[RMDB]
RNA sequence: GGGAACGACUCGAGUAGAGUCGAAAAGAAAAGACGAUGUUAUUAUGAUUCUCGAGUAAUAGCAGGUCACGCGUACUACUCGCCGAACGGAAGGCUGACUGUUCGCGAAAUGAAACGAGUAAGAAAACACUGAUCCCAGUUUCGACUGGGAUCAGUGAAAAGAAACAACAACAACAAC
Reactivity to 2A3 in 0.01 (KOAc 150mM, MgCl2 10mM, bicine 150mM(pH8.5), 24C), signal-to-noise 2, nucleotides 027 to 126: g060a040a020a000a050g150a100c120g000a110u050g010u000u000a000u000u000a060u090g090a160u060u120c080u110c160g030a000g000u020a000a000u000a000g040c020a000g090g000u050c000a000c180g060c050g000u010a030c010u020a010c000u000c010g000c000c000g000a050a040c050g130g060a080a030g150g000c120u030g120a020c040u000g030u000u080c000g000c010g060a150a000a060u300g020a010a010a000c030g010a060g100u120a090a040g110a040a010a000a000
Reactivity to DMS in 0.01 (KOAc 150mM, MgCl2 10mM, bicine 150mM(pH8.5), 24C), signal-to-noise 1, nucleotides 027 to 126: g030a000a080a080a150g000a110c010g030a030u000g000u000u000a000u000u000a000u000g000a120u000u000c250u030c100g020a240g000u000a070a000u000a030g050c030a030g020g010u010c070a100c020g030c010g070u030a090c020u000a050c110u000c000g040c300c080g000a010a050c080g000g000a040a000g010g030c000u000g050a060c030u000g000u000u000c000g000c160g020a050a070a060u000g000a000a080a190c000g000a060g000u020a060a150g000a130a030a040a110